[RMDB]
RNA sequence: GGGAACGACUCGAGUAGAGUCGAAAAAGGCAGCUUCCCGGCUUUUAAGCUACGGACGAUGCAAACGUAGCAGGCAUCGAAUAUUCGGCCCUUCGAAAAGCUGAGAUGAGCUCAGCAAGGGAAUCAACAAACCUUAAUGGUUCGCCAUUAAGGUUUGAAAAGAAACAACAACAACAAC
Reactivity to DMS in 0.01 (KOAc 150mM, MgCl2 10mM, bicine 150mM(pH8.5), 24C), signal-to-noise 6, nucleotides 027 to 126: a050g010g020c040a040g000c080u000u000c010c000c010g000g000c030u000u000u000u000a070a120g010c010u000a010c030g010g000a090c060g010a080u000g020c100a050a090a180c040g010u000a020g000c010a110g000g010c030a060u010c020g000a070a120u010a140u000u000c020g010g010c050c010c040u000u000c070g010a100a070a090a120g010c000u000g010a030g010a300u010g010a150g010c010u000c010a010g010c010a060a040g000g000g010a060a070u010c110a080a160
Reactivity to 2A3 in 0.01 (KOAc 150mM, MgCl2 10mM, bicine 150mM(pH8.5), 24C), signal-to-noise 3, nucleotides 027 to 126: a000g050g000c030a030g010c010u040u000c000c000c000g010g000c000u150u110u030u140a090a020g000c010u020a010c020g000g050a020c050g110a080u160g060c090a150a060a040c000g030u040a010g030c030a010g040g000c010a050u060c060g050a100a050u120a170u190u090c010g040g000c010c020c010u060u040c020g030a090a050a070a040g010c020u010g010a010g010a080u160g100a030g080c010u010c020a010g000c000a010a000g040g000g030a030a050u090c010a020a120

Structure probing data (DMS and 2A3) for a 177-nucleotide construct.
The RNA was probed in 150 mM KOAc, 10 mM MgCl2 and 150 mM bicine (pH 8.5) at 24 C.
The data come from the RNA Mapping Database (RMDB), library M2PK90.